[RMDB]
RNA sequence: GGGAACGACUCGAGUAGAGUCGAAAAGAUAUGGACCAUGGUCAGGCGACGAUCGUGCGGUCGGAAACGACCGCCACGGGAGCCUGCAUGGUCCUAAGUCAAACAUGACGGCUUCGGCCGUCAUGAACAUAGACGUUAGGUUCGCCUAACGUCUAUGAAAAGAAACAACAACAACAAC
Reactivity to DMS in 0.01 (KOAc 150mM, MgCl2 10mM, bicine 150mM(pH8.5), 24C), signal-to-noise 5, nucleotides 027 to 126: g010a020u000a060u010g000g000a020c010c000a000u000g000g010u080c030a020g010g010c000g020a070c300g000a010u010c010g010u000g020c000g020g020u000c000g030g000a020a010a040c010g020a020c020c010g020c160c100a000c030g000g000g010a020g020c000c000u000g010c000a000u000g000g000u000c000c000u000a000a030g000u000c010a180a130a300c030a000u000g000a020c000g000g000c000u000u020c260g030g010c000c000g010u000c000a000u000g000a110a200
Reactivity to 2A3 in 0.01 (KOAc 150mM, MgCl2 10mM, bicine 150mM(pH8.5), 24C), signal-to-noise 3, nucleotides 027 to 126: g000a000u020a000u050g000g000a000c010c000a010u030g060g240u300c030a010g010g010c010g040a300c030g000a290u000c010g030u050g000c000g020g010u000c010g000g000a010a010a000c000g000a000c020c010g010c030c000a000c000g000g010g000a010g000c000c000u000g000c000a010u000g000g010u000c000c000u000a000a000g000u000c000a030a020a100c010a000u010g000a000c000g000g010c000u090u160c300g190g000c000c000g000u000c000a000u000g000a010a000

Chemical mapping of a 177-nucleotide RNA with DMS and 2A3.
For DMS, 10,597 sequencing reads were counted.
The RNA was probed in 150 mM KOAc, 10 mM MgCl2 and 150 mM bicine (pH 8.5) at 24 C.
For 2A3, 14,111 sequencing reads were counted.